[RMDB]
Notes
The record gives the reactivity of an RNA of 207 nucleotides to DMS and 2A3. Values cover nucleotides 27 to 156. DMS adducts were read by reverse transcription with MarathonRT. The RNA was probed in 150 mM KOAc, 10 mM MgCl2 and 150 mM bicine (pH 8.5) at 24 C. The DMS profile rests on 2,778 reads.
RNA sequence: GGGAACGACUCGAGUAGAGUCGAAAAGGCCUAUUGACCGUAGAGGCCAGGUGCGGUGGCUCAUACCUGUAAUCCCAGCAGUUGGGGAGGCCAAGGUGGGAGGAUUGCUUGAGCCCAAGAGUUGGAGACCAGCCUGGGCAACAUGGUGAGACCAAUAGGUAUGAGUCAUAUUCGUAUGACUCAUACCAAAAGAAACAACAACAACAAC
Reactivity to DMS in 0.01 (KOAc 150mM, MgCl2 10mM, bicine 150mM(pH8.5), 24C), signal-to-noise 1, nucleotides 027 to 156: g010g000c010c000u010a120u000u000g010a060c030c040g000u000a120g010a150g040g030c030c020a050g020g030u010g010c060g000g000u010g010g000c030u030c030a090u020a060c000c050u000g040u000a090a080u000c000c000c010a100g030c060a140g100u010u000g030g000g020g020a070g030g020c030c020a070a100g010g040u010g010g010g000a110g060g000a130u000u000g010c020u030u000g010a110g020c020c010c020a060a070g020a100g000u010u000g010g000a180g000a100c050c030a130g010c000c020u000g010g000g010c030a040a050c040a040u000g000g020u010g000a180g010a140c010c010a060a090u000a120
Reactivity to 2A3 in 0.01 (KOAc 150mM, MgCl2 10mM, bicine 150mM(pH8.5), 24C), signal-to-noise 2, nucleotides 027 to 156: g020g020c010c030u070a140u050u200g110a090c080c000g000u050a050g050a030g080g030c040c010a030g040g000u070g020c090g000g000u050g040g000c010u000c040a080u080a090c000c000u050g030u070a010a060u000c000c040c000a050g050c020a040g000u210u050g010g000g000g040a060g000g000c010c030a030a020g020g000u050g000g020g000a050g020g010a060u080u040g020c000u060u080g050a030g000c000c000c010a060a070g040a010g040u020u110g070g010a090g020a040c050c000a010g000c000c010u000g030g000g000c010a030a010c020a050u060g000g040u030g020a040g020a060c020c030a050a070u230a100